The record gives the reactivity of an RNA of 177 nucleotides to 2A3 and DMS. The reactions ran in a buffer of 150 mM KOAc, 10 mM MgCl2 and 150 mM bicine (pH 8.5), at 24 C. DMS adducts were read by reverse transcription with MarathonRT. It was measured as part of the RMDB library OK1LIB.
RNA sequence: GGGAACGACUCGAGUAGAGUCGAAAAGAAAAGAGGGCAAAAUAAAGACUAGUUAAGCCCAAACUAACAAAAGGCCAAAAGAAGGCCAAGCGUAGUGAAACUGAAGCAGUACGCAAUUCAGUUAAAAAUCCCAUAGUGCAUUCGUGCACUAUGGGAUAAAAGAAACAACAACAACAAC
Reactivity to 2A3 in 0.01 (KOAc 150mM, MgCl2 10mM, bicine 150mM(pH8.5), 24C), signal-to-noise 2, nucleotides 027 to 126: g060a010a150a020a020g210a090g000g000g010c060a170a000a240a000u280a160a140a000g100a100c170u080a040g070u100u000a100a010g000c060c000c000a010a000a000c020u030a020a000c030a030a090a030a000g000g030c000c000a030a000a120a000g270a070a090g030g000c000c000a030a000g000c020g080u080a080g000u050g060a020a010a010c040u060g000a000a000g070c000a060g050u150a110c020g000c000a000a070u020u050c010a000g040u050u090a000a050a000a000
Reactivity to DMS in 0.01 (KOAc 150mM, MgCl2 10mM, bicine 150mM(pH8.5), 24C), signal-to-noise 2, nucleotides 027 to 126: g000a030a060a100a130g020a160g060g020g020c020a050a050a100a110u020a180a180a240g000a090c160u060a110g000u030u000a120a270g000c000c010c010a010a120a060c050u010a050a110c070a030a120a160a040g030g000c010c030a020a050a050a040g030a080a090g030g060c040c080a040a040g020c060g000u010a060g040u000g000a140a020a000c030u030g030a020a010g000c030a060g030u040a070c170g000c010a040a010u010u000c010a040g000u000u020a000a070a020a050